[RMDB]
RNA sequence: GGGAACGACUCGAGUAGAGUCGAAAACCCGAAACCGGAUGAUCUAGACAUGGGCAAGACGAAGCGUGCCGAAAGGCACGUGGAGGUCUGCUAGCGUUGGUGUCCUACAAUACCCUCGCGUGACCUAGACUAAAGUUUAAUUCGUUAAACUUUAGUCAAAAGAAACAACAACAACAAC
Reactivity to DMS in 0.01 (KOAc 150mM, MgCl2 10mM, bicine 150mM(pH8.5), 24C), signal-to-noise 9, nucleotides 027 to 126: c000c000c010g010a040a090a100c130c070g000g010a070u010g000a070u010c050u000a080g010a100c090a070u010g010g010g000c030a060a050g010a030c010g010a300a220g010c000g010u010g010c000c000g010a080a100a140g010g010c010a000c000g010u000g000g000a300g010g000u000c010u000g000c020u010a080g020c060g010u000u000g010g010u000g000u010c050c030u010a060c190a080a060u010a090c030c010c010u000c030g010c040g010u010g000a130c040c030u000a200
Reactivity to 2A3 in 0.01 (KOAc 150mM, MgCl2 10mM, bicine 150mM(pH8.5), 24C), signal-to-noise 9, nucleotides 027 to 126: c010c000c000g030a090a040a020c050c020g050g030a050u080g010a030u080c040u090a040g050a120c030a110u150g060g020g000c060a130a050g020a010c010g010a010a000g000c000g000u000g000c000c000g050a070a040a020g000g000c000a000c000g000u000g000g000a010g040g120u010c010u000g000c010u020a030g020c020g040u020u030g020g010u030g030u040c010c030u050a050c030a040a050u050a090c000c000c000u020c020g010c020g040u040g030a070c010c030u030a040